Structure probing data (2A3 and DMS) for a 177-nucleotide construct. Source: RMDB library RFMREP, as collected in RNAgym. Values cover nucleotides 27 to 126. The reactions ran in a buffer of 150 mM KOAc, 10 mM MgCl2 and 150 mM bicine (pH 8.5), at 24 C. For 2A3 the reverse transcriptase was SuperScript II with manganese.
RNA sequence: GGGAACGACUCGAGUAGAGUCGAAAAGGACACCUUCGGGUGUCCAAACGGAGUUCCAACAGGCCAUACAACUUUGCGUUUGCAUGGCACUGCUGAAACUCCGAAAAAAGUGCACCUUCGGGUGCACCUAGUGAUGACAGUUCGCUGUCAUCACUAGAAAAGAAACAACAACAACAAC
Reactivity to 2A3 in 0.01 (KOAc 150mM, MgCl2 10mM, bicine 150mM(pH8.5), 24C), signal-to-noise 2, nucleotides 027 to 126: g000g000a010c020a020c010c030u050u060c220g120g000g000u010g010u000c000c010a000a010a000c010g020g000a000g000u000u020c010c000a000a000c010a010g020g000c000c010a010u020a020c010a050a010c030u210u240u300g080c120g150u120u070u050g020c020a000u000g090g000c210a190c170u010g010c000u000g000a010a000a010c000u000c000c000g040a000a010a000a010a000a000g010u000g010c000a000c000c030u060u080c220g110g000g000u000g000c000a000c000
Reactivity to DMS in 0.01 (KOAc 150mM, MgCl2 10mM, bicine 150mM(pH8.5), 24C), signal-to-noise 2, nucleotides 027 to 126: g000g010a020c010a010c000c000u000u010c180g030g010g020u000g010u000c000c000a010a030a180c020g020g000a010g020u000u000c020c000a010a000c010a000g000g000c010c010a000u010a000c010a020a040c040u020u020u010g030c270g000u000u000u000g030c030a010u000g000g020c000a090c000u000g030c010u000g000a020a000a000c000u000c000c010g000a000a040a050a090a060a090g010u000g000c000a020c000c000u000u010c170g020g010g050u000g010c000a000c000